[RMDB]
RNA sequence: GGGAACGACUCGAGUAGAGUCGAAAAGAGCUGCUGCGUGACGAGGACAUCCAGCAGGUGAUCGACCGGAUGAUUGUGCGUCGUAUCGCCGAACCGCAGUGGGGUCCGCCGGCGGGCCGGGUGCUGGGCCAGUCUGAGUGUUCGCACUCAGACUGGCAAAAGAAACAACAACAACAAC
Reactivity to 2A3 in 0.01 (KOAc 150mM, MgCl2 10mM, bicine 150mM(pH8.5), 24C), signal-to-noise 2, nucleotides 027 to 126: g070a000g050c040u040g030c000u010g030c020g090u090g040a100c030g050a070g000g090a040c000a030u040c030c020a020g040c010a030g050g010u000g060a020u000c000g010a010c040c000g120g020a120u160g110a080u130u280g100u130g120c100g000u000c030g010u110a030u050c010g030c010c000g020a020a030c000c000g010c080a020g010u190g010g020g010g020u010c000c000g040c010c040g040g000c030g020g050g000c010c070g000g000g010u070g000c000u090g070g030
Reactivity to DMS in 0.01 (KOAc 150mM, MgCl2 10mM, bicine 150mM(pH8.5), 24C), signal-to-noise 1, nucleotides 027 to 126: g000a090g090c000u030g000c030u000g040c080g080u000g000a090c060g000a290g050g000a150c040a100u030c040c000a070g010c000a210g000g000u000g040a020u000c000g000a000c030c050g000g010a070u010g000a140u010u000g000u010g020c180g010u000c000g020u010a050u000c000g020c040c000g000a130a080c150c010g000c010a020g070u000g000g000g000g000u020c000c000g000c110c040g000g000c070g000g000g030c090c040g000g000g000u040g000c010u030g000g000